Overview: An RNA of 177 nucleotides, treated with DMS and read out base by base. Source: RMDB library RFMREP, as collected in RNAgym. The RNA was probed in 150 mM KOAc, 10 mM MgCl2 and 150 mM bicine (pH 8.5) at 24 C. For DMS the reverse transcriptase was MarathonRT.

RNA sequence: GGGAACGACUCGAGUAGAGUCGAAAACCUUUUUUUUGGUGAUUGUGUAGAGUGGCGACCUGUGUGGGUUGAAGAGGGGGCGUGAGUUCCUUUGGACCUUGCAGGUAUGUGGAUCCUGGUAGUAGUACACAUAUGAUGUCUUCGGACAUCAUAUGUGAAAAGAAACAACAACAACAAC
Reactivity to DMS in 0.01 (KOAc 150mM, MgCl2 10mM, bicine 150mM(pH8.5), 24C), signal-to-noise 2, nucleotides 027 to 126: c010c000u000u000u000u000u000u000u000u010g000g020u000g000a110u010u000g010u000g010u000a080g010a080g020u010g010g010c060g010a090c030c020u010g020u000g000u010g010g000g010u010u000g010a100a110g010a030g010g010g010g010g000c040g010u010g010a180g020u000u000c030c000u000u000u000g000g000a040c020c000u000u000g010c030a040g010g010u000a050u000g040u010g010g010a050u000c040c030u010g000g010u010a070g000u010a060g010u010a200